[RMDB]
RNA sequence: GGGAACGACUCGAGUAGAGUCGAAAAACCACAGCCGGCGUGCCAGACUUUCGUUCGCCUAUGACGAUUUGAUGGCCUAAUUUAGUAGGAUACGCUUUUGUGGUGUCUUGACAUGAAAGAAGAGAUUAAGAGACUCGCCAGCUGACUUUGUUCGAGGCAGCUUAUACAAGUUCGCUUGUAUAAGCUGAAAAGAAACAACAACAACAAC
Reactivity to DMS in 0.01 (KOAc 150mM, MgCl2 10mM, bicine 150mM(pH8.5), 24C), signal-to-noise 3, nucleotides 027 to 156: a160c000c010a130c010a060g000c050c020g020g020c000g010u000g020c020c010a140g020a070c020u000u000u000c010g030u010u000c000g010c020c000u010a090u000g020a030c040g010a060u000u000u010g030a080u000g010g030c010c020u020a040a100u000u000u010a130g020u010a100g020g020a100u000a060c040g010c010u000u000u000u000g040u000g020g020u000g010u020c070u000u000g010a090c030a060u000g000a040a040a070g000a080a100g000a200g010a130u000u000a100a110g010a150g000a030c020u010c020g030c030c020a040g010c020u010g000a070c060u000u000u000g010u000u000c020g010a250g010g000
Reactivity to 2A3 in 0.01 (KOAc 150mM, MgCl2 10mM, bicine 150mM(pH8.5), 24C), signal-to-noise 9, nucleotides 027 to 156: a000c020c010a020c010a020g040c030c050g030g010c010g030u050g020c020c020a060g040a180c040u070u070u040c020g020u040u050c050g060c060c030u120a120u180g020a010c020g020a030u010u030u170g100a070u060g010g000c000c020u070a080a140u130u120u180a070g050u010a020g040g020a050u030a070c020g010c000u040u050u040u090g040u040g030g040u050g020u040c050u040u070g040a020c010a050u070g050a040a020a040g040a040a010g040a010g030a050u130u110a150a030g040a020g020a100c010u010c040g000c010c000a010g010c010u020g010a080c040u120u110u110g030u030u040c030g010a040g060g000